An RNA of 177 nucleotides, treated with 2A3 and DMS and read out base by base.
Values cover nucleotides 27 to 126.
For 2A3, 20,002 sequencing reads were counted.
2A3 adducts were read by reverse transcription with SuperScript II with manganese.
RNA sequence: GGGAACGACUCGAGUAGAGUCGAAAACACGGUCGGCAACAACCUGAUGUAUUUCGAGACGGGGCAGGGCAGCGCGCUGUCGGCGAACGCGCAUCACGGCGUCGACCAGCAGACCUGCGAGGUGCGACUAUAAUGCACUGUUCGCAGUGCAUUAUAGAAAAGAAACAACAACAACAAC
Reactivity to 2A3 in 0.01 (KOAc 150mM, MgCl2 10mM, bicine 150mM(pH8.5), 24C), signal-to-noise 7, nucleotides 027 to 126: c050a010c060g010g000u010c010g020g020c020a070a070c020a060a060c110c000u020g010a040u030g040u070a160u040u090u050c060g010a040g010a030c020g010g000g040g010c020a040g050g070g000c030a050g050c030g000c030g010c030u020g000u020c000g070g120c010g030a090a030c050g050c020g000c100a020u040c020a010c140g030g000c020g000u010c000g010a020c020c000a000g010c010a000g010a060c010c010u070g030c060g050a050g020g030u060g030c010g010a010
Reactivity to DMS in 0.01 (KOAc 150mM, MgCl2 10mM, bicine 150mM(pH8.5), 24C), signal-to-noise 9, nucleotides 027 to 126: c100a100c130g010g020u000c020g020g000c030a110a090c100a090a140c030c020u010g000a060u000g010u000a110u010u000u000c040g010a220g000a070c050g010g010g010g010c020a080g010g010g000c080a070g020c090g000c080g010c020u000g010u000c010g000g010c010g010a030a060c210g010c120g000c050a060u000c050a050c120g010g000c050g020u000c010g010a030c060c050a090g010c060a080g000a100c050c020u000g010c050g000a080g010g010u000g000c030g000a230